[RMDB]
RNA sequence: GGGAACGACUCGAGUAGAGUCGAAAAACAUUGGACACUUAUUGGCCAAAUACUUAACCUUGAGUUGUGUAGAGAGAUUUUGUCACUUGGGUGUUUUUGCUUCACAUCUUCAUGGUCACACCUGAUGUGGUAACGGCAAUUUCGAUUGCCGUUACCAAAAAGAAACAACAACAACAAC
Reactivity to DMS in 0.01 (KOAc 150mM, MgCl2 10mM, bicine 150mM(pH8.5), 24C), signal-to-noise 1, nucleotides 027 to 126: a090c100a090u010u030g030g000a030c020a030c160u020u000a090u000u010g000g020c030c030a050a030a080u010a050c080u000u000a030a120c050c010u010u020g010a090g000u000u000g000u020g010u010a060g000a110g000a070g010a090u000u000u000u000g020u000c020a010c070u000u000g050g020g010u000g000u000u000u000u000u000g010c080u000u000c030a030c050a040u000c060u010u000c070a060u000g000g000u000c140a070c100a170c000c030u000g030a070u020g010